[RMDB]
RNA sequence: GGGAACGACUCGAGUAGAGUCGAAAACGGAACUCCCGCUCUCCACACUCCUUCCCCCCGCGGGCCCCCCAAUUCAGAGCCAAGAACCCACCCAUCGGGGUCCGACGUUCCUACCCUUUCUUACCUGUCAGCUUGCGCUUCGGCGCAAGCAAAAGAAACAACAACAACAAC
Reactivity to 2A3 in 0.01 (KOAc 150mM, MgCl2 10mM, bicine 150mM(pH8.5), 24C), signal-to-noise 1, nucleotides 027 to 129: c040g020g020a000a060c070u060c020c030c000g000c010u050c000u000c000c000a070c000a010c090u000c000c000u030u060c000c010c010c000c000c040g020c030g000g000g000c000c000c000c000c000c000a000a010u180u160c000a020g030a000g000c000c010a020a000g100a090a090c000c000c000a060c090c000c000a070u080c080g100g000g000g010u070c000c000g030a080c000g000u000u000c000c010u000a000c010c010c000u030u190u090c010u000u050a040c010c000u060g160u210c040a070